[RMDB]
RNA sequence: GGGAACGACUCGAGUAGAGUCGAAAAACGAGUUGGAACCACAAGCAACCUACAGCAAUCAGAGCAUUCAUGCGUAUUUCAUAAAGGAUUGGUCCAAUAAAGCGCUGAAAGUAGAUCUCACACCGCAAAUUGCGCAGUAUUUCGAUACUGCGCAAUUAAAAGAAACAACAACAACAAC
Reactivity to DMS in 0.01 (KOAc 150mM, MgCl2 10mM, bicine 150mM(pH8.5), 24C), signal-to-noise 2, nucleotides 027 to 126: a110c030g030a030g050u000u010g000g030a120a070c030c030a140c210a030a100g000c060a040a070c020c050u000a060c110a040g010c060a090a050u020c140a020g010a090g020c060a120u000u000c050a060u010g020c020g020u000a050u000u010u000c160a080u000a030a100a100g000g000a050u000u000g020g010u000c010c030a000a150u010a070a080a060g000c060g020c050u000g000a020a060a040g020u000a060g000a080u000c040u000c020a040c050a070c070c040g000c120a050
Reactivity to 2A3 in 0.01 (KOAc 150mM, MgCl2 10mM, bicine 150mM(pH8.5), 24C), signal-to-noise 1, nucleotides 027 to 126: a000c040g020a060g030u050u030g040g000a040a020c000c000a040c030a030a060g020c010a030a010c010c000u060a030c060a040g000c000a070a040u130c020a020g040a050g100c010a010u020u000c010a020u130g000c000g030u050a300u030u140u180c090a050u090a030a110a050g080g000a010u070u070g130g100u070c000c000a010a020u070a080a060a000g000c040g020c000u000g040a030a010a000g040u050a040g020a050u000c000u020c010a000c000a040c060c020g050c040a020
The data come from the RNA Mapping Database (RMDB), library OK2TRN. An RNA of 177 nucleotides, treated with DMS and 2A3 and read out base by base. For DMS the reverse transcriptase was MarathonRT. High 2A3 reactivity points to a flexible backbone, as in loops and unpaired stretches. 2A3 adducts were read by reverse transcription with SuperScript II with manganese. The reactions ran in a buffer of 150 mM KOAc, 10 mM MgCl2 and 150 mM bicine (pH 8.5), at 24 C. For DMS, 1,472 sequencing reads were counted.